[RMDB]
Background
Chemical mapping of a 207-nucleotide RNA with 2A3. Reactivities are given for positions 27 through 156. The data come from the RNA Mapping Database (RMDB), library M2RFPK. For 2A3, 1,016 sequencing reads were counted. Conditions: 150 mM KOAc, 10 mM MgCl2 and 150 mM bicine (pH 8.5), 24 C. For 2A3 the reverse transcriptase was SuperScript II with manganese.
RNA sequence: GGGAACGACUCGAGUAGAGUCGAAAAAGCCUGGUCGAUACGUCGACCAGGCAAUGCCGCCACAACGGCUUCCUGGCGUGGCGGAUCUCAUCCAAUGGAGCAACGCUCCGGAUACCUCCGGAGCGAAAAAAGCUCUGCUUCUUCGGAAGCAGAGCAAGUAUAUCAAUAUCUUCGGAUAUUGAUAUACAAAAGAAACAACAACAACAAC
Reactivity to 2A3 in 0.01 (KOAc 150mM, MgCl2 10mM, bicine 150mM(pH8.5), 24C), signal-to-noise 2, nucleotides 027 to 156: a000g300c000c000u000g000g010u050c030g030a050u000a080c200g060u010c020g010a000c010c010a000g000g010c000a000a000u000g000c010c000g000c000c000a000c000a050a020c020g070g000c050u120u230c040c010u020g020g020c020g010u000g000g000c020g000g000a010u020c010u010c020a090u100c060c070a090a130u200g000g000a010g000c030a110a010c020g010c000u010c010c030g090g000a120u160a180c010c050u050c020c040g020g040a000g000c010g040a030a000a000a000a000a000g000c000u000c000u000g000c000u010u000c000u020u020c030g150g010a010a000g000c000a000g000a000g000c000a000a000